Annotation
Source: RMDB library M2PK50, as collected in RNAgym. Structure probing data (2A3 and DMS) for a 177-nucleotide construct.

RNA sequence: GGGAACGACUCGAGUAGAGUCGAAAACAGAACUAAUUCGUUAGUUCUGGCAUAUAACCUUCACCAAUUAGGUUCAAAUAAGUGGUAAUAAUAAAAAUAAAACGGGGUCUGCAUUCGUGCAGACCAAGUUAUGUAAGUUGUUCGCAACUUACAUAACAAAAGAAACAACAACAACAAC
Reactivity to 2A3 in 0.01 (KOAc 150mM, MgCl2 10mM, bicine 150mM(pH8.5), 24C), signal-to-noise 5, nucleotides 027 to 126: c000a000g000a000a000c000u020a030a020u090u130c150g060u030u010a000g000u000u000c000u000g000g000c040a110u300a030u050a100a030c010c000u020u020c030a020c010c000a020a000u060u050a060g030g000u110u180c070a070a070a090u040a120a000g030u010g020g020u030a020a030u150a120a040u150a030a170a060a030a040u160a040a120a030a000c070g270g030g040g040u000c000u000g000c000a000u020u070c150g040u030g000c000a000g000a000c000c000a000a000
Reactivity to DMS in 0.01 (KOAc 150mM, MgCl2 10mM, bicine 150mM(pH8.5), 24C), signal-to-noise 3, nucleotides 027 to 126: c000a000g000a010a020c000u000a010a030u000u010c190g020u010u000a010g020u000u000c000u000g000g020c150a050u000a100u020a070a030c010c010u010u000c030a060c020c010a030a060u000u000a010g000g010u020u000c200a050a040a030u000a010a030g020u000g000g000u010a160a140u040a100a100u020a030a050a070a050a140u010a060a040a070a090c130g000g000g020g010u000c000u000g010c000a040u000u010c130g020u000g000c000a000g020a000c000c000a000a010
Values cover nucleotides 27 to 126. Values are in units of 0.01, from 0 to 300, in steps of 10.